[RMDB]
RNA sequence: GGGAACGACUCGAGUAGAGUCGAAAAGAUAUGGACGUCGUCGUAGCAUCGAUCAUACGGUCGGAAACGACCGUUAUGGGAGCUACAACGACGUCCUAAGUCAAAGGAGAAAUGUUCGCAUUUCUCCCUAUUGACAGGACUUCGGUCCUGUCAAUAGAAAAGAAACAACAACAACAAC
Reactivity to DMS in 0.01 (KOAc 150mM, MgCl2 10mM, bicine 150mM(pH8.5), 24C), signal-to-noise 4, nucleotides 027 to 126: g020a040u000a300u000g010g000a000c010g010u000c010g010u000c020g010u010a000g010c020a300u000c170g010a100u020c000a010u000a020c010g010g000u000c000g000g000a060a100a240c010g020a010c000c000g000u020u000a000u010g000g020g010a030g020c000u000a010c000a020a000c010g010a010c010g000u000c000c000u000a000a070g010u000c030a110a180a140g010g020a020g010a010a010a000u000g010u010u010c300g020c010a020u000u000u000c000u010c030c010
Reactivity to 2A3 in 0.01 (KOAc 150mM, MgCl2 10mM, bicine 150mM(pH8.5), 24C), signal-to-noise 3, nucleotides 027 to 126: g060a040u110a070u180g000g010a000c000g010u010c000g000u020c020g000u010a000g000c050a300u300c050g140a130u070c030a000u000a000c000g000g010u000c030g030g000a070a090a030c010g000a010c010c000g000u010u050a000u010g000g030g030a010g000c000u010a000c010a010a000c010g000a010c010g000u000c000c000u020a000a000g000u010c020a040a060a060g040g010a010g010a010a020a010u030g020u110u200c300g060c190a000u000u000u010c010u000c010c000